Source: RMDB library RNAMAK, as collected in RNAgym. An RNA of 207 nucleotides, treated with DMS and 2A3 and read out base by base.
[RMDB]
RNA sequence: GGGAACGACUCGAGUAGAGUCGAAAACGCUGGGAAACGGUGGAGUAACUGCUUCUUUUGACGACCAAGAGCUGAAGCGCGCACGGCUCUUGGUCGAUAAGAAGCUGUUACGCUGACGUUUCCUGUGCUGAAGCGCGCACGGCAACCGAAAGGUGCGGUUACUGUAAUUCUUCGGAAUUACAGUAACAAAAGAAACAACAACAACAAC
Reactivity to DMS in 0.01 (KOAc 150mM, MgCl2 10mM, bicine 150mM(pH8.5), 24C), signal-to-noise 3, nucleotides 027 to 156: c050g020c040u010g030g030g000a030a010a020c000g010g000u000g010g020a070g020u000a020a030c010u000g010c000u000u010c000u000u000u000u000g010a250c060g000a040c010c000a020a030g010a040g020c000u000g010a090a080g010c030g020c050g030c040a300c020g010g000c010u000c000u000u020g000g010u000c000g000a000u010a020a040g010a050a050g020c010u000g010u010u000a010c000g000c010u000g010a070c050g010u000u000u000c000c010u010g030u010g000c040u000g000a140a060g020c010g020c020g030c010a120c010g010g000c000a170a210c020c000g010a110a120a200g030g020u000g020c030g000
Reactivity to 2A3 in 0.01 (KOAc 150mM, MgCl2 10mM, bicine 150mM(pH8.5), 24C), signal-to-noise 7, nucleotides 027 to 156: c040g000c010u070g000g000g010a010a010a000c010g010g070u080g050g090a080g010u010a010a010c010u050g010c000u010u010c000u030u120u140u210g250a150c030g000a000c010c000a000a000g010a000g000c010u030g050a210a020g050c040g000c020g000c070a030c020g010g000c000u000c000u000u000g000g000u000c000g000a000u010a000a010g000a000a000g000c000u000g000u000u000a000c000g000c020u090g030a010c000g000u000u000u000c000c000u000g030u040g000c020u080g030a110a030g010c020g000c010g000c010a010c020g040g000c030a090a120c050c020g090a140a040a020g060g000u020g000c020g020